[RMDB]
RNA sequence: GGGAACGACUCGAGUAGAGUCGAAAAUAAGAGCAUGUACGAAUCACGAUAUGAGAGUUCCAGGUGAAUCCCGGGUACAAGGAAAGGUAUUAAUCUCCCACUGCGUUCCCUUGCAGUAGGGAUAUAAAGAACAAGCGUAGUUCGCUACGCUUGUUCUAAAAGAAACAACAACAACAAC
Reactivity to DMS in 0.01 (KOAc 150mM, MgCl2 10mM, bicine 150mM(pH8.5), 24C), signal-to-noise 1, nucleotides 027 to 126: u000a100a060g010a050g000c040a070u030g010u010a070c060g000a110a080u010c010a090c070g010a140u010a100u020g010a160g030a070g010u000u000c050c050a070g000g020u000g010a110a100u020c020c040c020g010g000g000u010a020c100a040a060g000g000a070a060a050g010g010u000a080u020u000a040a100u000c120u000c010c010c000a020c030u000g010c000g000u000u000c010c030c060u010u010g000c020a020g000u000a080g020g020g010a020u000a010u020a080a070